Source: RMDB library OK3TST, as collected in RNAgym. Structure probing data (2A3) for a 207-nucleotide construct.

[RMDB]
RNA sequence: GGGAACGACUCGAGUAGAGUCGAAAAUCAUCUUUCCAACCUCUGUGUGCUACGUGGGGGUUGGAGCACUUGCUGACAAGCCUUGCAACCACCAUUGACAGGAUGUCCUCCACCUUUUCAAUCUGAUUUGCUCUUUGCCAUGCAGACCUGUGGAUGACCUGAUCGAUUAGUUCGCUAAUCGAUCAGGAAAAGAAACAACAACAACAAC
Reactivity to 2A3 in 0.01 (KOAc 150mM, MgCl2 10mM, bicine 150mM(pH8.5), 24C), signal-to-noise 3, nucleotides 027 to 156: u070c020a010u000c030u070u100u010c000c000a010a010c010c010u000c000u010g030u020g050u110g220c110u140a030c040g020u050g000g000g010g020g000u000u000g000g000a000g000c000a010c050u060u130g020c030u040g050a030c010a030a100g010c000c010u000u090g010c010a020a060c010c020a040c030c010a090u070u130g080a090c040a020g010g070a110u060g020u010c000c000u000c010c020a030c010c000u060u130u080u100c070a120a130u020c040u050g090a180u070u030u130g030c020u010c060u080u070u090g000c020c020a050u090g000c010a010g010a100c000c020u040g000u040g060g020a040u040g030a040
The reactions ran in a buffer of 150 mM KOAc, 10 mM MgCl2 and 150 mM bicine (pH 8.5), at 24 C. 2A3 adducts were read by reverse transcription with SuperScript II with manganese. Reactivities are given for positions 27 through 156.